[RMDB]
RNA sequence: GGGAACGACUCGAGUAGAGUCGAAAAGAUAUGGACACGUCAACAGCUGAGGACUCGGAAACGAGUCUCAGACAUGACGGUCCUAAGUCAAAACUUAUCAAUCUAAGUUCGCUUAGAUUGAUAAGAAUCGCAAUUAGUUCUUCGGAACUAAUUGCGAAAAAGAAACAACAACAACAAC
Reactivity to 2A3 in 0.01 (KOAc 150mM, MgCl2 10mM, bicine 150mM(pH8.5), 24C), signal-to-noise 1, nucleotides 027 to 126: g040a020u050a000u090g000g000a120c110a030c300g010u000c020a080a080c040a180g060c000u010g020a040g130g220a160c010u000c020g020g000a040a050a020c020g000a000g030u000c010u000c000a000g000a110c050a020u080g000a000c000g000g000u000c000c010u000a120a020g050u050c010a000a000a110a130c000u000u010a000u000c010a010a000u020c000u000a010a000g000u080u140c090g060c080u000u000a010g000a010u010u000g010a000u020a000a000g000a010a080
Reactivity to DMS in 0.01 (KOAc 150mM, MgCl2 10mM, bicine 150mM(pH8.5), 24C), signal-to-noise 1, nucleotides 027 to 126: g000a030u010a300u010g010g010a010c000a090c000g010u000c000a040a080c220a180g000c000u000g000a060g000g000a010c000u010c010g000g010a070a100a170c020g000a010g000u000c000u010c030a010g000a090c080a230u000g000a000c010g010g000u000c000c000u000a010a120g000u010c040a040a040a170a130c010u000u010a000u000c000a010a010u000c000u000a000a010g020u000u010c300g010c000u010u000a000g010a000u000u000g010a000u000a000a010g010a060a110